[RMDB]
RNA sequence: GGGAACGACUCGAGUAGAGUCGAAAAGAACGAUCUCACUCGUGUGUACGUGUGUGUUCUCACGUGUGAUCGAUCGUGAGUGUGAUCUCGUUCACUCGAGUUCGUGAGAACGUGAACGUGUGAUCACGUGAUCGAACGAGAUCGAGUGAGAGUACUCCAUGAGAAGAGCCUUCGGGCUCUUCUCAUGAAAAGAAACAACAACAACAAC
Reactivity to 2A3 in 0.01 (KOAc 150mM, MgCl2 10mM, bicine 150mM(pH8.5), 24C), signal-to-noise 2, nucleotides 027 to 156: g030a050a010c060g020a060u010c000u000c010a010c010u010c000g010u060g010u040g020u120a000c020g060u090g040u080g060u070g110u230u070c040u010c030a010c030g060u040g010u040g070a070u040c090g030a010u000c010g000u000g040a060g030u050g000u050g000a030u000c030u020c000g020u040u010c000a000c010u030c080g120a070g080u070u040c010g000u130g010a160g000a040a000c020g000u000g020a010a000c030g080u110g100u160g110a040u000c020a000c020g000u000g010a070u010c010g000a000a030c020g010a010g020a080u040c000g000a000g000u010g010a020g010a020g000u020a030c020u000c020
Reactivity to DMS in 0.01 (KOAc 150mM, MgCl2 10mM, bicine 150mM(pH8.5), 24C), signal-to-noise 1, nucleotides 027 to 156: g010a120a120c040g000a140u000c000u000c000a020c010u000c020g030u000g020u000g030u010a030c010g030u010g000u000g040u010g010u000u000c020u000c010a000c000g040u010g050u020g000a110u010c040g010a060u010c000g010u010g010a200g000u020g000u000g010a020u000c020u000c000g000u000u000c010a040c000u000c060g000a120g020u000u000c000g020u010g000a300g010a060a020c010g000u020g010a020a040c040g000u010g040u000g010a140u000c020a030c000g010u010g000a190u000c030g050a110a160c000g000a110g000a100u000c020g000a040g020u030g000a070g020a080g000u000a080c040u010c030
Structure probing data (2A3 and DMS) for a 207-nucleotide construct. 2A3 adducts were read by reverse transcription with SuperScript II with manganese.